[RMDB]
RNA sequence: GGGAACGACUCGAGUAGAGUCGAAAAUGUAAGGGCAUUGACAAGCCUAGGUAGGUGCGUAACCUUAAAAUCCGUGAAGCCGUCCGUGUCUGAUUAAGGUACUGAUUGUGAUGACGAUAGUAAGUCACCGUAUAAUCGUGUUCGCACGAUUAUACGGAAAAGAAACAACAACAACAAC
Reactivity to 2A3 in 0.01 (KOAc 150mM, MgCl2 10mM, bicine 150mM(pH8.5), 24C), signal-to-noise 2, nucleotides 027 to 126: u180g020u080a070a070g040g010g010c050a030u050u130g020a030c030a090a000g000c010c000u010a010g040g050u050a000g020g010u030g010c050g070u070a000a010c000c000u000u030a040a060a040a070u000c020c010g030u010g040a030a020g020c000c010g000u050c010c010g000u020g000u000c000u020g060a090u090u150a090a020g070g020u060a050c000u040g080a150u060u070g050u030g020a060u060g000a000c020g020a040u030a100g090u030a130a020g000u010c010a020
Reactivity to DMS in 0.01 (KOAc 150mM, MgCl2 10mM, bicine 150mM(pH8.5), 24C), signal-to-noise 4, nucleotides 027 to 126: u010g010u010a100a130g000g010g000c030a060u000u000g000a070c090a130a160g010c010c020u010a090g010g010u000a050g000g010u000g000c180g020u020a130a050c020c010u010u000a060a050a090a100u010c030c030g010u000g010a100a150g010c030c060g010u010c030c080g010u000g000u000c010u000g000a100u010u010a060a070g000g010u010a060c040u010g010a060u010u000g010u000g010a080u010g000a070c040g020a120u000a100g010u000a090a140g000u010c030a090